[RMDB]
RNA sequence: GGGAACGACUCGAGUAGAGUCGAAAACACAAUGUGCGCCAUUAACAUUGUUUAUGCAAGCACGUUUCGCAAUCUACGGCGCAGAAACAUUGCCAACACAAAUACGCUUCACGAUGUGCGGCACAGAAAAAGCUCGCGCACUUCGGUGCGCGAGCAACUACAUCAAUAUGUUCGCAUAUUGAUGUAGAAAAGAAACAACAACAACAAC
Reactivity to 2A3 in 0.01 (KOAc 150mM, MgCl2 10mM, bicine 150mM(pH8.5), 24C), signal-to-noise 5, nucleotides 027 to 156: c080a010c010a020a090u050g000u010g020c000g020c030c020a070u090u100a070a030c030a090u070u120g030u090u100u080a060u090g030c040a020a120g050c050a050c190g000u020u060u070c070g010c040a060a070u040c020u130a050c070g090g000c040g010c020a020g060a010a040a000c030a060u030u100g040c030c040a100a020c050a050c020a080a160a030u220a100c100g020c080u080u130c090a030c100g090a050u060g080u060g050c030g050g020c050a020c010a030g180a020a090a010a000a000g010c000u020c010g000c010g010c010a000c000u030u050c150g090g000u000g000c000g000c010g000a000g000c000a000a000
Reactivity to DMS in 0.01 (KOAc 150mM, MgCl2 10mM, bicine 150mM(pH8.5), 24C), signal-to-noise 1, nucleotides 027 to 156: c050a150c020a070a100u010g020u000g010c030g000c030c020a220u000u020a100a090c030a090u020u010g010u000u020u000a050u020g010c090a090a150g010c020a080c090g000u000u010u020c080g000c050a070a110u000c060u000a090c060g010g040c050g020c050a110g030a070a040a050c040a060u000u000g020c000c040a120a060c010a070c030a050a010a070u000a070c110g030c080u010u000c080a010c090g010a060u000g020u010g050c000g010g090c050a130c030a070g000a030a080a060a120a110g030c010u000c010g000c000g000c000a020c000u000u000c190g050g120u030g040c000g000c100g070a000g000c000a010a010
Chemical mapping of a 207-nucleotide RNA with 2A3 and DMS. The reactions ran in a buffer of 150 mM KOAc, 10 mM MgCl2 and 150 mM bicine (pH 8.5), at 24 C. For DMS the reverse transcriptase was MarathonRT. The 2A3 profile rests on 3,971 reads.